An RNA of 207 nucleotides, treated with 2A3 and DMS and read out base by base.
Reactivities are given for positions 27 through 156.
[RMDB]
RNA sequence: GGGAACGACUCGAGUAGAGUCGAAAACGGGAGUGAUCCAGAUGACGGUCCUGCCAUGAGACCGCAACGAGAGCAUGUUGCAUCGAAUGGACUCGGGGAGUCGGCAGCUUGCCCCACGGAUGAGCGCAUAAGACAGCCCCGUUCGCGGGGCUGUCAAUCUAUAAUUUACGUUCGCGUAAAUUAUAGAAAAAGAAACAACAACAACAAC
Reactivity to 2A3 in 0.01 (KOAc 150mM, MgCl2 10mM, bicine 150mM(pH8.5), 24C), signal-to-noise 2, nucleotides 027 to 156: c040g020g000g010a030g010u070g020a020u070c010c020a060g050a130u110g030a040c020g000g020u060c000c000u040g110c010c000a030u060g000a030g010a040c100c130g020c040a020a010c020g060a020g010a030g220c100a090u180g030u020u040g000c010a010u000c020g040a020a030u070g050g000a050c050u030c130g000g040g000g000a000g040u040c020g020g020c010a000g030c020u060u090g040c000c030c060c000a040c050g010g030a080u070g030a030g060c040g040c030a030u040a200a020g020a000c000a000g020c040c010c020c000g000u030u010c060g020c000g030g010g050g000c030u000g000u000c000a000a000
Reactivity to DMS in 0.01 (KOAc 150mM, MgCl2 10mM, bicine 150mM(pH8.5), 24C), signal-to-noise 2, nucleotides 027 to 156: c080g020g020g020a080g020u020g000a110u000c020c000a100g020a090u000g010a080c040g030g010u000c020c010u000g030c030c130a070u000g010a300g000a010c050c060g000c050a030a040c030g000a200g010a110g020c070a110u000g020u010u000g010c020a150u010c010g020a180a090u000g000g020a090c060u000c070g000g070g020g000a090g040u000c090g020g000c060a070g010c040u000u020g010c010c020c000c060a090c100g020g010a110u000g000a070g000c020g020c080a040u000a080a160g020a050c000a040g000c000c000c000c060g000u000u010c200g040c050g040g030g000g090c020u000g000u020c000a000a030